[RMDB]
Structure probing data (2A3 and DMS) for a 177-nucleotide construct. Conditions: 150 mM KOAc, 10 mM MgCl2 and 150 mM bicine (pH 8.5), 24 C. For 2A3 the reverse transcriptase was SuperScript II with manganese.

RNA sequence: GGGAACGACUCGAGUAGAGUCGAAAAGAUAUGGACACUUCUUUUGACGACGAUUGGCUCGGAAACGAGCCAAAUCGUCGAUAAGAAGGUCCUAAGUCAAACCUCUGCGGCUUCGGCCGCAGAGGAACUCAAACAAGAAGUUCGCUUCUUGUUUGAGAAAAGAAACAACAACAACAAC
Reactivity to 2A3 in 0.01 (KOAc 150mM, MgCl2 10mM, bicine 150mM(pH8.5), 24C), signal-to-noise 2, nucleotides 027 to 126: g020a020u080a070u140g030g000a050c120a140c300u060u020c010u020u090u080u210g250a170c110g000a000c000g020a040u030u010g000g050c010u010c020g010g000a100a050a050c030g000a030g010c030c010a010a040a030u000c000g010u000c000g000a000u000a000a000g010a000a000g000g010u010c000c000u010a080a010g030u000c040a080a030a300c000c010u030c010u000g010c020g040g000c040u110u180c300g120g000c060c000g100c000a000g000a010g000g000a000a000
Reactivity to DMS in 0.01 (KOAc 150mM, MgCl2 10mM, bicine 150mM(pH8.5), 24C), signal-to-noise 2, nucleotides 027 to 126: g010a060u000a300u000g000g000a020c010a110c000u010u000c000u020u000u000u020g010a230c100g010a000c000g010a070u000u000g000g010c000u000c000g020g000a100a100a190c010g010a000g020c010c010a000a010a020u000c010g010u000c000g000a020u000a000a010g000a000a000g020g010u000c010c000u000a010a060g020u010c010a100a200a250c000c000u000c000u000g010c000g000g000c030u000u020c290g020g010c000c000g000c000a000g000a000g000g000a000a010